[RMDB]
Source information: Chemical mapping of a 177-nucleotide RNA with DMS and 2A3. For 2A3 the reverse transcriptase was SuperScript II with manganese. The 2A3 profile rests on 3,245 reads.
RNA sequence: GGGAACGACUCGAGUAGAGUCGAAAAGAUAUGGACCUUUAGAUCGAUAAGCUGGUGUCGGAAACGACAUUCAGCUUUUGACGAUCGAAGAGGUCCUAAGUCAAACCUCUGGCUUCGGCCAGAGGAACAAAUGUAGUUCCUUCGGGAACUACAUUUGAAAAGAAACAACAACAACAAC
Reactivity to DMS in 0.01 (KOAc 150mM, MgCl2 10mM, bicine 150mM(pH8.5), 24C), signal-to-noise 5, nucleotides 027 to 126: g000a030u000a300u000g000g010a010c000c000u000u000u000a300g000a000u000c020g010a200u010a010a020g020c000u000g000g040u000g000u000c000g000g010a100a080a150c000g000a010c000a000u000u030c000a000g020c000u000u010u000u010g030a210c170g010a010u000c000g000a170a190g000a020g000g000u000c000c010u000a000a090g010u000c020a150a120a210c020c010u010c000u000g000g010c000u010u010c210g030g010c000c000a010g000a000g000g010a030a050
Reactivity to 2A3 in 0.01 (KOAc 150mM, MgCl2 10mM, bicine 150mM(pH8.5), 24C), signal-to-noise 2, nucleotides 027 to 126: g020a000u050a050u160g010g000a000c000c000u150u300u120a030g000a010u000c060g070a080u050a300a000g030c010u000g000g010u000g020u020c010g010g010a100a060a030c010g030a010c000a000u170u150c000a040g020c000u010u000u000u000g010a000c000g000a000u000c000g020a010a030g010a010g030g000u000c000c000u010a040a010g030u000c000a020a050a240c000c000u000c010u000g030g000c050u010u110c300g160g000c000c010a000g010a020g020g010a000a010